This 177-nucleotide RNA was probed chemically with DMS and 2A3.
For 2A3, 589 sequencing reads were counted.

RNA sequence: GGGAACGACUCGAGUAGAGUCGAAAAGAAAGAAAGAAAGCGUGUGCUGGAGGAUGAAGUAAGGAGUGAUCCAUCGGCUAAGUGUUUUCCCACUGUGCUGACACUCACAUUGCUGACAGUGCACGAAUGGUUUCCACCUUUUCGAAGGUGGAAACCAAAAAGAAACAACAACAACAAC
Reactivity to DMS in 0.01 (KOAc 150mM, MgCl2 10mM, bicine 150mM(pH8.5), 24C), signal-to-noise 1, nucleotides 027 to 126: g000a050a020a010g000a110a000a130g010a100a190a300g000c000g050u000g020u000g000c020u000g000g000a300g000g000a160u010g220a110a020g000u000a090a100g000g000a050g000u000g000a130u000c130c270a250u000c000g000g000c000u000a280a000g030u080g040u000u000u000u000c160c050c000a020c000u000g000u000g000c000u080g000a000c000a000c000u000c000a150c050a120u050u010g000c010u000g000a130c000a000g000u000g040c070a000c020g000a000a050
Reactivity to 2A3 in 0.01 (KOAc 150mM, MgCl2 10mM, bicine 150mM(pH8.5), 24C), signal-to-noise 1, nucleotides 027 to 126: g050a000a070a000g100a010a140a000g190a000a000a000g060c050g020u000g000u010g060c000u000g080g000a020g010g010a080u260g110a000a060g040u170a000a070g070g020a000g070u000g080a050u130c170c020a080u070c000g000g000c000u000a140a000g000u000g000u020u020u100u190c010c050c000a000c000u040g000u050g040c000u000g000a000c020a000c020u020c020a080c020a040u020u060g090c000u000g040a000c000a000g000u000g000c000a000c050g000a000a000
Source: RMDB library RFM100, as collected in RNAgym. Conditions: 150 mM KOAc, 10 mM MgCl2 and 150 mM bicine (pH 8.5), 24 C. 2A3 adducts were read by reverse transcription with SuperScript II with manganese.